[RMDB]
RNA sequence: GGGAACGACUCGAGUAGAGUCGAAAAAUAGAGUGGCAGUUAUGUAUGGUGGUCAAAUGGUUGAAACAGGAGAUGUUAACGAAAUAUUUUAUGAUCCAAAGCAUCCAUAUACAUGGGGAUUAUUAUCAACGAGACAGAUGUUCGCAUCUGUCUCGUUAAAAGAAACAACAACAACAAC
Reactivity to DMS in 0.01 (KOAc 150mM, MgCl2 10mM, bicine 150mM(pH8.5), 24C), signal-to-noise 1, nucleotides 027 to 126: a120u000a010g020a060g050u020g000g000c010a100g040u000u000a040u000g010u000a050u000g000g020u010g000g000u000c070a120a070a090u010g010g000u010u000g020a080a060a070c090a140g010g050a090g000a060u000g000u020u010a080a090c080g000a040a040a090u000a050u010u010u010u010a050u010g000a080u010c010c050a050a130a190g000c160a060u000c040c020a010u000a060u010a040c190a050u000g010g040g010g010a130u010u010a050u020u020a070u010c180

Structure probing data (DMS) for a 177-nucleotide construct. Reactivities are given for positions 27 through 126. DMS adducts were read by reverse transcription with MarathonRT. It was measured as part of the RMDB library OK2TST. Conditions: 150 mM KOAc, 10 mM MgCl2 and 150 mM bicine (pH 8.5), 24 C.